[RMDB]
Description
Structure probing data (2A3 and DMS) for a 177-nucleotide construct. DMS (dimethyl sulfate) methylates the pairing face of unpaired adenines and cytosines. For 2A3, 4,300 sequencing reads were counted. Conditions: 150 mM KOAc, 10 mM MgCl2 and 150 mM bicine (pH 8.5), 24 C. The data come from the RNA Mapping Database (RMDB), library OK1LIB. Values cover nucleotides 27 to 126.
RNA sequence: GGGAACGACUCGAGUAGAGUCGAAAACUUCGACUGCAUGCAACACUAGAAACGAUAUCAGCGGCUUCAAUCCCACAGUUAAAGUCACUUGACGAAACACUCCGCACAUGAGACCUUUGCAAAGCAAAUUCACAACAGACUUCGGUCUGUUGUGAAUAAAAGAAACAACAACAACAAC
Reactivity to 2A3 in 0.01 (KOAc 150mM, MgCl2 10mM, bicine 150mM(pH8.5), 24C), signal-to-noise 6, nucleotides 027 to 126: c010u090u050c040g110a030c010u030g010c020a060u030g010c030a080a010c010a030c080u080a060g040a050a130a010c020g050a040u030a060u150c040a020g030c000g040g000c020u090u050c040a060a150u030c010c020c010a080c050a030g050u050u130a110a080a030g030u020c020a010c160u080u180g030a030c040g060a020a040a000c050a010c010u010c000c000g050c010a020c010a080u090g010a010g040a110c010c030u100u110u100g050c070a040a110a050g030c020a040a090
Reactivity to DMS in 0.01 (KOAc 150mM, MgCl2 10mM, bicine 150mM(pH8.5), 24C), signal-to-noise 3, nucleotides 027 to 126: c070u000u000c050g000a060c040u000g030c030a020u000g060c080a090a060c030a170c080u020a080g000a060a090a060c050g000a040u060a040u000c080a060g070c060g000g000c050u000u000c070a070a120u030c030c000c010a050c070a050g010u000u020a030a060a090g030u000c000a040c070u020u000g000a070c050g000a070a060a100c030a060c040u000c020c000g000c090a050c060a120u010g000a130g020a040c020c000u020u010u000g030c070a080a080a130g030c110a020a080